[RMDB]
RNA sequence: GGGAACGACUCGAGUAGAGUCGAAAAGCGCCGCACAGCCAGUCCUGCCUCACGGUACAGGCGAUAGAUGCGCUUGUGAUUGGCGUGCGUGCCUUCGCGUUCCACCAGGGCGUGCAGUCGGCGGUAAGAUUUAAUUACUGUUCGCAGUAAUUAAAUCAAAAGAAACAACAACAACAAC
Reactivity to 2A3 in 0.01 (KOAc 150mM, MgCl2 10mM, bicine 150mM(pH8.5), 24C), signal-to-noise 7, nucleotides 027 to 126: g040c040g000c010c000g000c010a010c020a010g000c000c000a000g010u010c010c060u090g020c010c000u100c020a060c080g010g020u040a020c010a010g020g010c020g010a020u130a120g250a070u300g050c010g000c010u010u010g020u030g010a040u010u030g000g000c020g000u000g000c000g050u110g010c000c000u020u040c040g040c020g020u060u030c010c010a040c010c020a050g040g010g000c010g020u060g020c020a030g050u070c020g020g020c030g020g030u050a100a010
Reactivity to DMS in 0.01 (KOAc 150mM, MgCl2 10mM, bicine 150mM(pH8.5), 24C), signal-to-noise 9, nucleotides 027 to 126: g010c110g050c020c010g010c020a020c020a160g020c010c010a030g000u000c010c300u000g000c020c010u010c220a120c290g010g020u000a050c040a020g010g010c000g010a080u000a100g000a140u010g000c030g010c000u000u000g010u000g000a030u000u000g000g010c000g010u000g010c010g010u010g020c010c050u000u000c050g010c070g010u000u000c010c020a120c120c070a090g000g000g010c030g000u000g010c040a070g010u000c050g000g010c040g010g000u000a080a120